Source information: Chemical mapping of a 177-nucleotide RNA with DMS and 2A3. The RNA was probed in 150 mM KOAc, 10 mM MgCl2 and 150 mM bicine (pH 8.5) at 24 C. The DMS profile rests on 1,616 reads. Reactivities are given for positions 27 through 126.
RNA sequence: GGGAACGACUCGAGUAGAGUCGAAAACAAAGUGAUGACCUCGGUGGUGGUGGUCUCGUCGCAGCUGAUUCCGACAUGAUCAGAACCCGCACGUCGCAGAUUGAUGCCGAGGCUUUCCGCGCGUGCGCUCCCAGGUCCGAUUCGUCGGACCUGGGAGAAAAGAAACAACAACAACAAC
Reactivity to DMS in 0.01 (KOAc 150mM, MgCl2 10mM, bicine 150mM(pH8.5), 24C), signal-to-noise 1, nucleotides 027 to 126: c080a150a090a040g020u050g000a000u000g000a180c060c000u020c000g000g000u010g000g000u010g000g030u000g010g010u050c080u030c040g000u020c030g000c080a110g000c030u000g000a080u000u030c040c040g000a160c130a070u000g060a010u000c160a060g040a080a110c160c050c030g010c050a040c000g070u050c010g050c030a000g000a000u000u000g020a130u000g010c050c030g000a010g010g000c000u030u090u010c020c090g000c010g000c030g000u000g000c000g000
Reactivity to 2A3 in 0.01 (KOAc 150mM, MgCl2 10mM, bicine 150mM(pH8.5), 24C), signal-to-noise 3, nucleotides 027 to 126: c050a040a140a050g100u150g080a120u110g050a080c010c010u000c020g020g020u100g030g030u030g010g030u020g010g030u030c010u040c050g050u030c000g020c060a040g000c030u040g000a130u130u020c020c000g040a030c140a170u120g020a040u040c000a030g040a120a110c000c020c030g010c000a010c000g230u250c050g000c010a020g020a050u030u040g020a020u100g060c050c010g030a010g010g030c000u000u000u000c020c000g010c000g010c000g020u010g000c000g000